RNA sequence: GGGAACGACUCGAGUAGAGUCGAAAAGAAGAUAAGAAAAUUUUCCGGUGGCCAACCGCCCGGGCCACCGUUACUCCACUCCACUCCUUCGGGACUGGUUUGGAGGAACAUAACUGGGCGGACAGAAGGUACCUCAGUCAUUCGUGACUGAGGUACCAAAAGAAACAACAACAACAAC
Reactivity to 2A3 in 0.01 (KOAc 150mM, MgCl2 10mM, bicine 150mM(pH8.5), 24C), signal-to-noise 1, nucleotides 027 to 126: g060a040a000g080a070u160a150a070g120a070a100a070a070u110u120u020u030c000c000g000g000u000g010g000c000c000a140a230c070c040g020c020c000c020g000g000g010c000c000a000c000c000g020u010u010a000c000u000c000c000a000c000u000c000c000a000c070u000c000c000u020u110c160g030g000g000a000c000u000g000g000u000u000u000g000g010a000g010g000a000a000c010a060u240a100a000c050u080g000g000g000c000g000g000a000c030a050g180a220a040